RNA sequence: GGGAACGACUCGAGUAGAGUCGAAAAGCAUCAAGCCAGGAACGGAAGCAUGGAUGGAUCGCCAGCGAGCGUUCGAAGCUGGAGAGUAUAUAGCCCUAGGGACGAAACAGGCGGCCACCGGCAUGGAGUUGCCAAGACAAUUCGUUGUCUUGGCAACAAAAGAAACAACAACAACAAC
Reactivity to DMS in 0.01 (KOAc 150mM, MgCl2 10mM, bicine 150mM(pH8.5), 24C), signal-to-noise 3, nucleotides 027 to 126: g020c100a090u000c080a080a090g040c030c030a080g010g020a050a040c040g040g020a120a100g000c090a040u010g000g040a090u010g010g000a060u010c050g070c030c010a050g010c130g040a110g000c060g010u040u000c040g000a060a260g000c030u000g020g010a110g010a090g010u000a120u000a090u030a090g010c010c010c020u000a130g000g020g000a200c040g000a100a090a080c140a080g000g000c000g000g010c030c040a080c030c030g000g010c070a030u000g000g000a220
Reactivity to 2A3 in 0.01 (KOAc 150mM, MgCl2 10mM, bicine 150mM(pH8.5), 24C), signal-to-noise 2, nucleotides 027 to 126: g040c040a080u070c050a140a010g060c020c030a060g000g010a060a020c060g000g040a110a000g030c040a090u140g060g000a070u010g000g030a140u160c020g000c040c010a000g090c060g100a010g050c060g020u080u040c030g060a040a000g010c000u000g020g020a070g000a000g050u090a080u010a040u090a210g000c000c000c000u030a060g020g000g050a000c030g050a070a120a000c040a030g000g020c060g060g020c020c010a010c010c020g050g000c020a020u050g030g010a130